[RMDB]
RNA sequence: GGGAACGACUCGAGUAGAGUCGAAAAUCAAAAGAGAGCUUUGUAGAGGCAUUCUUUUUGACUACUUUUCUCUAGCGUGCCAUUUUAGUUUUUGACGGAGAUUCGAAUGAACUUAAGUUUAUGAUGAACCUAAAUGUAACUUCGGUUACAUUUAGGUAAAAGAAACAACAACAACAAC
Reactivity to DMS in 0.01 (KOAc 150mM, MgCl2 10mM, bicine 150mM(pH8.5), 24C), signal-to-noise 4, nucleotides 027 to 126: u010c040a030a030a020a050g000a070g010a070g010c010u000u010u010g020u010a180g010a070g010g010c010a040u010u000c010u000u000u000u000u000g010a050c040u000a090c040u000u000u000u000c010u000c010u000a060g000c030g010u000g000c010c010a070u010u010u000u010a050g010u000u000u010u000u010g010a180c090g010g010a130g010a130u000u000c020g010a070a090u000g010a030a040c030u010u000a090a110g010u000u000u000a050u030g010a110u000g000a130
Reactivity to 2A3 in 0.01 (KOAc 150mM, MgCl2 10mM, bicine 150mM(pH8.5), 24C), signal-to-noise 3, nucleotides 027 to 126: u050c010a010a010a020a000g060a000g010a010g010c020u120u160u210g250u300a140g070a040g220g000c010a030u030u020c010u030u100u030u050u080g000a010c010u030a050c000u080u030u090u020c020u020c000u030a000g000c010g020u010g000c000c010a040u110u110u030u070a050g010u020u030u050u080u120g050a030c040g070g060a110g010a150u030u100c020g040a050a070u070g010a030a000c000u020u020a140a050g070u060u060u120a120u140g160a050u080g040a020
Structure probing data (DMS and 2A3) for a 177-nucleotide construct. For DMS, 5,100 sequencing reads were counted. For 2A3 the reverse transcriptase was SuperScript II with manganese. Conditions: 150 mM KOAc, 10 mM MgCl2 and 150 mM bicine (pH 8.5), 24 C. Values cover nucleotides 27 to 126.